[RMDB]
RNA sequence: GGGAACGACUCGAGUAGAGUCGAAAAAAAGAUAUGGACGUGGAUAAGAGCUUGGAUUUAUAGGCUAAUAUACUCGGAAACGAGUAUAGAAAGCCUAUUGUCAGCUCGUAACACGUCCUAAGUCAAACAUGUGAACACUGUUCGCAGUGUUCACAUGAAAAGAAACAACAACAACAAC
Reactivity to DMS in 0.01 (KOAc 150mM, MgCl2 10mM, bicine 150mM(pH8.5), 24C), signal-to-noise 2, nucleotides 027 to 126: a050a070a060g000a060u000a300u000g000g010a020c000g040u000g010g010a140u010a150a170g000a010g000c020u010u000g030g030a020u000u000u000a010u000a020g000g000c000u010a050a300u000a010u000a000c000u000c000g000g000a130a100a150c000g020a020g020u000a010u010a000g000a110a090a030g010c000c000u000a000u000u000g000u020c000a030g000c010u000c000g000u000a110a240c020a000c010g010u020c000c010u000a020a070g000u000c030a080a100a140
Reactivity to 2A3 in 0.01 (KOAc 150mM, MgCl2 10mM, bicine 150mM(pH8.5), 24C), signal-to-noise 1, nucleotides 027 to 126: a000a000a050g120a050u090a050u120g000g010a000c000g010u020g000g000a010u020a070a030g010a000g010c030u100u140g200g000a030u010u300u070a070u040a010g000g000c000u000a090a000u000a040u000a010c000u000c000g020g010a010a050a040c000g020a010g000u010a000u000a010g000a120a090a000g000c010c000u010a010u000u020g000u010c000a000g000c010u000c010g000u000a000a000c010a000c000g000u030c030c000u000a000a000g000u000c010a010a040a080
Structure probing data (DMS and 2A3) for a 177-nucleotide construct. DMS (dimethyl sulfate) methylates the pairing face of unpaired adenines and cytosines. The reactions ran in a buffer of 150 mM KOAc, 10 mM MgCl2 and 150 mM bicine (pH 8.5), at 24 C.